About this RNA
The record gives the reactivity of an RNA of 207 nucleotides to 2A3 and DMS. For DMS, 6,131 sequencing reads were counted. 2A3 adducts were read by reverse transcription with SuperScript II with manganese. It was measured as part of the RMDB library OK3TST.
RNA sequence: GGGAACGACUCGAGUAGAGUCGAAAAAAGCACCAAGAAAGGAGAGAGAAGGAGCAGUAGAAGAGGGACUUUGGGUUCCCAUGCUGAACAGGGUCCGCAACAAACCGUUAGGUGAAGCAAGAGCAGUUCAGCCCCACAUGGAGCAGGAGGCGCUCGAUAAUUUACUACGAUUCGUCGUAGUAAAUUAAAAAGAAACAACAACAACAAC
Reactivity to 2A3 in 0.01 (KOAc 150mM, MgCl2 10mM, bicine 150mM(pH8.5), 24C), signal-to-noise 3, nucleotides 027 to 156: a000a000g070c050a040c030c000a030a020g110a040a060a010g070g000a040g000a000g000a000g010a070a020g020g010a020g000c040a020g030u110a020g020a130a000g030a050g040g000g010a010c010u080u110u070g080g020g000u060u030c020c010c020a020u090g000c020u050g010a040a020c020a020g030g060g020u030c040c030g010c030a040a110c000a050a070a070c020c070g100u160u150a060g000g000u030g020a040a000g010c030a070a020g010a010g030c020a000g000u060u060c010a020g000c010c000c020c010a090c010a050u130g060g000a030g000c030a020g000g050a010g020g010c030g030c030u010c010g010a010
Reactivity to DMS in 0.01 (KOAc 150mM, MgCl2 10mM, bicine 150mM(pH8.5), 24C), signal-to-noise 2, nucleotides 027 to 156: a040a040g020c050a110c040c000a090a070g010a070a060a110g000g000a100g010a090g020a140g000a070a040g010g000a070g040c050a090g010u000a070g000a070a110g010a120g010g030g020a030c030u000u000u010g020g040g020u000u000c010c020c000a080u000g030c040u020g010a030a050c050a110g020g010g010u000c020c060g000c030a090a080c000a070a100a060c050c000g030u000u000a080g030g020u000g010a070a150g020c040a060a080g010a060g000c020a110g010u000u000c030a080g000c020c000c000c000a030c080a070u000g030g010a060g000c010a070g000g000a050g050g020c080g010c010u000c010g010a300